Conditions: 150 mM KOAc, 10 mM MgCl2 and 150 mM bicine (pH 8.5), 24 C. Chemical mapping of a 207-nucleotide RNA with DMS and 2A3. DMS adducts were read by reverse transcription with MarathonRT. Values cover nucleotides 27 to 156.
[RMDB]
RNA sequence: GGGAACGACUCGAGUAGAGUCGAAAACGUCCCCGGCGUACAGAAUGGUAACAUAUCUCUCCAAAUAUCUGAGCUUGGGUAUACGGGGAAACCCAACCCCUUGGGAAGAUUGGGUAUAUGGCUAAAUUACAUCGAUUGUACUUCGGUACAAUCGAAAGAAUAUACAAAGGUUCGCCUUUGUAUAUUCAAAAGAAACAACAACAACAAC
Reactivity to DMS in 0.01 (KOAc 150mM, MgCl2 10mM, bicine 150mM(pH8.5), 24C), signal-to-noise 2, nucleotides 027 to 156: c040g040u000c000c000c010c070g010g000c060g020u010a120c080a060g030a100a180u010g010g020u000a090a100c040a090u000a060u000c040u000c010u000c020c010a040a170a160u010a040u000c010u000g010a300g040c080u000u000g010g010g010u000a140u010a070c140g030g000g020g010a120a070a130c010c000c020a050a070c060c000c000c060u000u020g000g000g010a210a060g010a070u000u000g000g010g020u000a090u000a060u000g010g030c040u000a040a070a110u000u000a110c080a170u000c000g010a040u000u010g020u010a010c000u000u000c290g060g040u000a010c000a000a010u000c000g010a000a030a130
Reactivity to 2A3 in 0.01 (KOAc 150mM, MgCl2 10mM, bicine 150mM(pH8.5), 24C), signal-to-noise 5, nucleotides 027 to 156: c030g100u040c000c000c000c010g120g010c040g040u140a070c030a090g120a160a160u140g050g020u110a160a030c010a030u070a050u020c080u010c020u040c100c020a100a130a120u170a080u040c020u020g030a030g080c000u020u030g020g000g010u020a040u010a060c030g000g000g000g000a070a040a030c000c000c000a000a030c000c000c010c010u010u010g030g000g010a020a010g010a040u030u050g010g000g020u040a020u010a000u030g040g010c040u080a100a080a080u170u130a060c040a100u030c010g000a000u000u000g000u000a000c000u010u040c140g040g000u000a000c000a010a000u010c000g000a000a000a000

Source: RMDB library M2RFPK, as collected in RNAgym.